[RMDB]
Chemical mapping of a 177-nucleotide RNA with DMS and 2A3. Values cover nucleotides 27 to 126. The reactions ran in a buffer of 150 mM KOAc, 10 mM MgCl2 and 150 mM bicine (pH 8.5), at 24 C. It was measured as part of the RMDB library OK1LIB.
RNA sequence: GGGAACGACUCGAGUAGAGUCGAAAAGCCAGAGAGGUGCAGGCUAUAGCUGCCAUCGGCUGACCUAGAGAAGACACAUCAGCUGAUCCUUUGGACCCUCUGACUUGAGACAGAAGUUCUGGGCAAAGUUUGAAUGAAUCUUCGGAUUCAUUCAAACAAAAGAAACAACAACAACAAC
Reactivity to DMS in 0.01 (KOAc 150mM, MgCl2 10mM, bicine 150mM(pH8.5), 24C), signal-to-noise 5, nucleotides 027 to 126: g040c020c000a030g000a040g020a120g030g020u000g030c020a030g030g020c080u040a090u010a070g040c070u020g010c010c120a090u020c020g010g010c000u000g000a040c120c090u020a110g010a160g010a100a050g000a130c130a100c270a250u010c020a010g010c030u010g000a050u010c110c080u010u040u020g020g000a070c030c000c010u010c020u010g000a050c010u000u000g000a270g000a070c080a060g010a100a130g000u010u000c010u000g020g000g000c130a100a070a140
Reactivity to 2A3 in 0.01 (KOAc 150mM, MgCl2 10mM, bicine 150mM(pH8.5), 24C), signal-to-noise 8, nucleotides 027 to 126: g010c010c000a000g000a000g010a090g010g040u130g090c050a010g080g000c040u110a070u150a290g070c070u050g000c010c010a010u010c000g010g000c000u010g010a020c020c060u100a050g050a010g050a260a040g090a050c080a020c010a130u010c000a020g000c010u010g000a040u080c030c040u110u130u100g050g030a040c010c000c000u000c000u000g030a040c010u010u050g010a030g020a040c020a030g070a100a010g070u050u020c030u060g000g020g030c070a100a050a050